Source: RMDB library OK1LIB, as collected in RNAgym. Structure probing data (2A3 and DMS) for a 177-nucleotide construct. 2A3 is a SHAPE reagent: it acylates the 2'-hydroxyl of flexible nucleotides of all four kinds. For DMS the reverse transcriptase was MarathonRT. The DMS profile rests on 1,253 reads. Values are in units of 0.01, from 0 to 300, in steps of 10.
RNA sequence: GGGAACGACUCGAGUAGAGUCGAAAAGACAAGCACUUCAGAAUAAAGAGUCUAUUUUCUAUACGUAUCAAAAAUUAAUACAAUUAAGACAUACGCAUGAUAUUAUUACGUAUGGAGACAUUGUGCCCAACAACUUCGUGUUCGCACGAAGUUGUUGAAAAGAAACAACAACAACAAC
Reactivity to 2A3 in 0.01 (KOAc 150mM, MgCl2 10mM, bicine 150mM(pH8.5), 24C), signal-to-noise 4, nucleotides 027 to 126: g030a020c000a000a060g030c010a010c070u100u090c080a090g130a180a140u250a190a140a000g060a000g010u000c040u030a140u060u050u010u000c000u010a040u000a000c000g010u010a030u150c150a020a040a100a120a110u160u120a030a040u070a080c050a060a060u100u170a160a050g060a030c000a040u220a100c120g020c180a000u070g050a150u060a070u150u060a060u080u030a000c000g000u000a000u000g040g000a000g000a010c070a020u100u120g050u050g020c000c000
Reactivity to DMS in 0.01 (KOAc 150mM, MgCl2 10mM, bicine 150mM(pH8.5), 24C), signal-to-noise 2, nucleotides 027 to 126: g000a100c080a090a110g000c130a010c050u010u070c090a170g000a070a070u000a040a260a130g000a040g000u020c000u050a130u000u010u000u000c000u000a000u000a000c040g000u000a080u040c110a030a090a110a100a000u040u020a060a080u060a020c010a040a160u020u000a050a080g000a300c200a030u000a080c110g070c060a140u010g000a120u010a000u010u000a050u000u020a000c000g010u000a000u000g000g000a040g010a050c300a020u010u000g030u010g000c010c160